[RMDB]
Notes:
Chemical mapping of a 177-nucleotide RNA with DMS and 2A3. Values are in units of 0.01, from 0 to 300, in steps of 10. For DMS the reverse transcriptase was MarathonRT. Reactivities are given for positions 27 through 126. Conditions: 150 mM KOAc, 10 mM MgCl2 and 150 mM bicine (pH 8.5), 24 C.
RNA sequence: GGGAACGACUCGAGUAGAGUCGAAAAGGUACCAAGUAAGUCGUUGGAGGAAGGUAUACGUACUAUAUCGCUAACGAAGCGUCUGGAAGUCCAAUCUAUAGCUGAAAUGAUAUCCUCUUUCCGCAGAAUUUACAAAUAAAUUCGUUUAUUUGUAAAUAAAAGAAACAACAACAACAAC
Reactivity to DMS in 0.01 (KOAc 150mM, MgCl2 10mM, bicine 150mM(pH8.5), 24C), signal-to-noise 9, nucleotides 027 to 126: g000g010u010a110c020c020a110a110g000u030a080a090g010u010c040g020u010u000g000g010a060g010g010a060a090g000g010u010a030u010a050c150g010u020a070c080u010a050u020a050u010c020g000c040u010a080a090c110g010a060a070g000c040g000u000c060u010g000g010a050a090g010u010c030c050a070a080u020c040u010a070u020a080g010c020u000g000a060a050a070u020g010a060u020a070u010c030c020u000c030u000u000u000c010c030g030c110a080g010a080
Reactivity to 2A3 in 0.01 (KOAc 150mM, MgCl2 10mM, bicine 150mM(pH8.5), 24C), signal-to-noise 4, nucleotides 027 to 126: g070g010u030a030c010c010a020a040g050u070a060a030g030u030c000g010u000u030g020g020a030g020g030a070a030g040g000u020a020u000a030c080g020u000a020c010u010a010u010a020u060c020g000c020u020a020a010c010g030a070a010g030c010g020u000c000u010g010g010a040a010g040u000c010c000a010a020u000c020u050a080u060a040g000c020u010g040a000a020a020u090g010a010u010a040u050c020c000u000c000u000u010u000c010c010g000c030a020g030a040